[RMDB]
RNA sequence: GGGAACGACUCGAGUAGAGUCGAAAAAAACUCCCGUAGACUUGAAUCGAAGGGGCACUGCCCUUAUAGUGCAAAGCAUGGUUGUAAUUCCGGCAACCCGGAGACGUUCUGGACGCGGGUUCGAUUCUGUCCAGAACGUGUUCGCACGUUCUGGACAAAAAGAAACAACAACAACAAC
Reactivity to 2A3 in 0.01 (KOAc 150mM, MgCl2 10mM, bicine 150mM(pH8.5), 24C), signal-to-noise 1, nucleotides 027 to 126: a010a010a010c060u060c020c000c020g000u060a040g030a090c020u040u120g000a030a050u030c000g010a070a000g000g000g000g000c030a070c230u070g030c000c000c010u000u050a280u120a030g030u020g010c020a000a020a070g000c030a040u050g100g010u010u000g000u130a160a170u200u000c000c000g080g130c020a000a030c000c000c000g020g020a030g000a030c060g010u080u000c010u120g020g020a040c000g000c060g010g000g000u030u050c030g030a010u040u000c000
Reactivity to DMS in 0.01 (KOAc 150mM, MgCl2 10mM, bicine 150mM(pH8.5), 24C), signal-to-noise 2, nucleotides 027 to 126: a030a110a060c100u000c030c020c010g000u020a140g010a070c030u020u000g010a120a010u000c040g020a200a150g010g040g000g000c030a160c160u060g000c000c000c000u000u000a030u000a090g000u000g000c300a060a030a020g050c080a070u020g000g040u000u020g030u000a040a110u040u010c090c020g000g000c090a070a040c070c020c100g000g000a040g020a110c050g010u000u010c000u000g000g030a000c050g040c150g030g000g000u000u000c040g000a040u030u000c000

The data come from the RNA Mapping Database (RMDB), library RFM100. An RNA of 177 nucleotides, treated with 2A3 and DMS and read out base by base. For 2A3, 513 sequencing reads were counted.